[RMDB]
RNA sequence: GGGAACGACUCGAGUAGAGUCGAAAAGCGCUGACCUGGCCCAUGCCCAGGAGCGCCAUUGCGCCGGACGAAUGCCCCUCGGGUGGGGCAAGCAACAUCGGCAAACUAAAUGGCUUCGGCCAUUUAGGGUUAUUUGUUGGUUCGCCAACAAAUAACCAAAAGAAACAACAACAACAAC
Reactivity to 2A3 in 0.01 (KOAc 150mM, MgCl2 10mM, bicine 150mM(pH8.5), 24C), signal-to-noise 2, nucleotides 027 to 126: g000c010g030c030u040g150a190c000c000u000g020g020c000c060c150a180u240g000c010c000c000a000g040g020a010g000c000g000c000c010a110u070u230g080c050g000c030c000g000g030a030c070g050a120a050u060g000c000c000c010c000u040c120g270g020g080u170g000g000g000g000c000a010a010g010c000a030a060c020a070u090c010g000g000c000a070a000a000c000u000a010a000a000u010g000g020c000u010u050c150g110g000c010c000a000u010u000u000a000g010
Reactivity to DMS in 0.01 (KOAc 150mM, MgCl2 10mM, bicine 150mM(pH8.5), 24C), signal-to-noise 1, nucleotides 027 to 126: g000c000g010c010u000g010a090c000c000u000g000g000c050c280c260a090u000g010c250c010c020a010g030g010a020g010c000g020c000c100a010u000u000g000c160g020c020c050g000g000a030c130g000a100a050u000g010c000c010c020c020u000c250g010g050g030u030g050g000g000g000c000a000a040g000c050a030a280c050a060u000c030g040g010c020a080a060a300c010u000a000a000a000u000g000g010c010u000u010c190g020g010c000c000a000u000u000u000a000g030
This 177-nucleotide RNA was probed chemically with 2A3 and DMS. The 2A3 profile rests on 2,209 reads. For DMS, 886 sequencing reads were counted. It was measured as part of the RMDB library RFMREP.